[RMDB]
RNA sequence: GGGAACGACUCGAGUAGAGUCGAAAAGGGUACAGCCCCGAGGACGGCGGCUGGUUCACCCGCGAGGCUGUCAUGCGGGUGGCGCUGCUGCUGCGGCCGACGACGAGCGCAGUCGCCGGGCAGAUCGCCGAGGCCGCCGGGAUGCGCUACACGCGGAUAGACAAAAACAAUUCGUUGUUUUUGUCUAAAAAGAAACAACAACAACAAC
Reactivity to 2A3 in 0.01 (KOAc 150mM, MgCl2 10mM, bicine 150mM(pH8.5), 24C), signal-to-noise 2, nucleotides 027 to 156: g030g000g020u090a060c000a030g020c000c010c000c020g030a130g110g080a050c020g000g050c020g010g010c000u040g030g000u110u150c050a020c030c000c010g000c000g020a050g050g090c070u090g040u180c030a100u250g000c030g010g000g000u010g000g000c030g020c010u160g000c010u040g070c000u110g070c010g020g010c110c040g040a080c020g020a020c050g040a070g060c070g010c080a030g040u030c030g020c010c010g020g000g050c020a030g000a150u170c030g020c030c020g000a050g020g000c020c000g000c000c000g000g000g000a020u050g000c000g000c010u100a060c080a010c070g000c000g030g010a030
Reactivity to DMS in 0.01 (KOAc 150mM, MgCl2 10mM, bicine 150mM(pH8.5), 24C), signal-to-noise 1, nucleotides 027 to 156: g000g000g050u000a120c020a060g020c020c000c000c050g010a120g010g010a090c030g030g020c050g000g050c000u010g000g040u000u010c070a030c040c010c030g040c010g010a150g030g020c070u020g000u010c050a180u010g030c000g000g020g050u010g020g030c030g030c060u010g010c030u000g040c030u000g020c050g030g000c000c040g020a050c020g020a030c030g040a130g030c070g030c030a150g010u000c020g010c000c060g040g060g010c000a080g010a090u010c010g030c020c000g010a220g000g010c000c030g030c000c000g020g010g010a050u000g010c040g040c020u000a150c000a100c040g000c020g020g000a260